[RMDB]
RNA sequence: GGGAACGACUCGAGUAGAGUCGAAAACUCGGGUUGGCUCAUCCUCGGCGAGGGCGACGGUCCUCAGUUCUCUCUAUUCUUUCUUGAAAGAGGAGACUGCUGGACCAAACGCCCGAGCCGGGAUGGGGGGGACCCCAGUUCGCUGGGGUCAAAAGAAACAACAACAACAAC
Reactivity to DMS in 0.01 (KOAc 150mM, MgCl2 10mM, bicine 150mM(pH8.5), 24C), signal-to-noise 4, nucleotides 027 to 129: c020u020c070g000g000g000u060u020g030g030c080u000c030a050u010c000c000u090c070g010g040c040g020a300g000g020g020c040g030a150c300g010g020u020c000c010u010c010a000g010u070u030c050u070c010u000c020u000a180u050u020c020u050u050u070c190u080u050g010a010a050a010g000a040g020g010a030g020a040c020u010g030c140u040g000g000a030c000c000a000a000a000c000g020c030c010c010g010a180g030c030c010g050g020g020a030u000g000g000g010g010g010g000
Reactivity to 2A3 in 0.01 (KOAc 150mM, MgCl2 10mM, bicine 150mM(pH8.5), 24C), signal-to-noise 5, nucleotides 027 to 129: c010u020c010g010g000g000u040u020g060g000c000u000c000a020u030c000c040u290c090g000g020c010g000a010g020g000g030c010g030a040c090g000g010u010c000c010u010c010a050g030u220u030c050u000c020u000c020u080a300u070u010c030u080u180u040c080u120u230g080a050a020a000g050a020g080g010a020g010a010c000u010g040c050u020g000g020a000c000c000a000a010a000c000g000c010c010c000g000a010g000c010c000g000g000g000a000u000g000g000g000g000g010g050
Structure probing data (DMS and 2A3) for a 170-nucleotide construct. Conditions: 150 mM KOAc, 10 mM MgCl2 and 150 mM bicine (pH 8.5), 24 C. The data come from the RNA Mapping Database (RMDB), library 15KLIB. Reactivities are given for positions 27 through 129.